[RMDB]
RNA sequence: GGGAACGACUCGAGUAGAGUCGAAAAACGAGGCCGUGCCUACUACGGUAGGCACGGCUUCGAAUUACGUUCAUCUACUUAAUCGUAGACGCAUCAAUACAUCAUUCAUGGAACGGGGGAUGGUGAAACUAGAAUCAAACGUUCGCGUUUGAUUCAACCUUAGAAAACAGUUCGCUGUUUUCUAAGGAAAAGAAACAACAACAACAAC
Reactivity to DMS in 0.01 (KOAc 150mM, MgCl2 10mM, bicine 150mM(pH8.5), 24C), signal-to-noise 1, nucleotides 027 to 156: a180c010g010a010g020g040c000c000g000u030g000c000c000u010a030c000u010a110c250g100g050u000a020g000g000c000a020c060g000g000c010u010u000c000g000a020a130u010u000a060c050g000u000u000c020a200u010c010u010a000c000u000u000a070a110u000c260g030u000a080g000a060c040g000c070a150u000c120a110a140u000a090c010a060u000c000a120u000u000c000a090u030g050g000a070a050c010g000g010g000g050g040a010u000g050g030u000g010a110a070a160c070u000a090g020a040a040u030c000a010a010a020c000g030u000u000c300g010c030g030u000u000u010g010a000u010u000c000a040a090
Reactivity to 2A3 in 0.01 (KOAc 150mM, MgCl2 10mM, bicine 150mM(pH8.5), 24C), signal-to-noise 3, nucleotides 027 to 156: a000c000g000a000g010g000c000c000g000u010g000c020c000u000a010c000u030a020c210g080g000u000a000g060g000c020a000c000g000g010c010u000u000c000g000a000a000u020u020a010c000g000u000u020c010a000u010c000u000a010c000u090u210a130a080u190c060g000u000a000g010a050c020g030c000a060u150c080a090a180u110a230c000a010u020c000a000u020u000c000a010u030g070g000a000a000c010g010g010g010g000g000a010u010g000g040u010g040a090a010a010c110u110a040g000a000a000u000c000a000a000a000c000g010u060u040c270g010c010g110u010u030u000g000a000u000u000c000a000a010
The data come from the RNA Mapping Database (RMDB), library M2RFPK. Chemical mapping of a 207-nucleotide RNA with DMS and 2A3. For DMS the reverse transcriptase was MarathonRT. Reactivities are rounded to 0.1 and cut off at 0 and 3.